[RMDB]
RNA sequence: GGGAACGACUCGAGUAGAGUCGAAAAGUUAAAAUUAGCCAGACGUGGUGGUAUGCACCUGUAGGCCCAUGUACUCAGGAGACUGCGGCAGGAGGAUGAGGUCAAGGCUGCAGUGAGCUAGGAUCGCACUACUGCAUGGGUGACAAAAUGAGACUACCAAUGGAUCAAUUUUCGAAUUGAUCCAUUGAAAAGAAACAACAACAACAAC
Reactivity to DMS in 0.01 (KOAc 150mM, MgCl2 10mM, bicine 150mM(pH8.5), 24C), signal-to-noise 2, nucleotides 027 to 156: g010u010u000a030a060a090a170u010u010a100g000c030c000a120g040a120c020g020u010g010g010u010g010g000u000a060u000g000c020a070c020c020u000g020u000a060g000g000c010c010c040a060u000g010u010a060c060u000c050a090g000g000a120g010a070c040u010g030c050g050g030c010a080g010g020a070g000g000a170u000g000a070g050g000u000c040a100a170g030g030c020u000g020c010a130g020u000g020a050g010c010u000a080g010g000a090u010c040g000c050a120c050u000a060c010u000g020c020a070u000g010g000g030u000g010a110c050a020a030a080a100u010g010a180g010a120c030u000a100c090
Reactivity to 2A3 in 0.01 (KOAc 150mM, MgCl2 10mM, bicine 150mM(pH8.5), 24C), signal-to-noise 4, nucleotides 027 to 156: g040u040u040a050a040a100a170u080u110a030g040c020c010a020g030a080c100g060u050g020g030u040g040g000u120a090u150g060c020a030c030c010u030g050u070a040g030g030c010c000c000a030u050g040u050a090c040u040c120a030g020g040a060g050a040c030u030g010c010g020g000c010a030g050g050a050g000g050a060u070g030a020g040g040u050c040a040a030g050g000c020u010g000c000a020g000u010g030a010g000c020u070a040g040g060a070u080c050g000c030a040c060u110a030c030u020g000c010a020u050g020g000g000u020g020a010c020a020a080a010a010u110g030a030g030a060c030u050a050c010
An RNA of 207 nucleotides, treated with DMS and 2A3 and read out base by base. Reactivities are given for positions 27 through 156. Conditions: 150 mM KOAc, 10 mM MgCl2 and 150 mM bicine (pH 8.5), 24 C. For 2A3, 4,118 sequencing reads were counted. For DMS the reverse transcriptase was MarathonRT.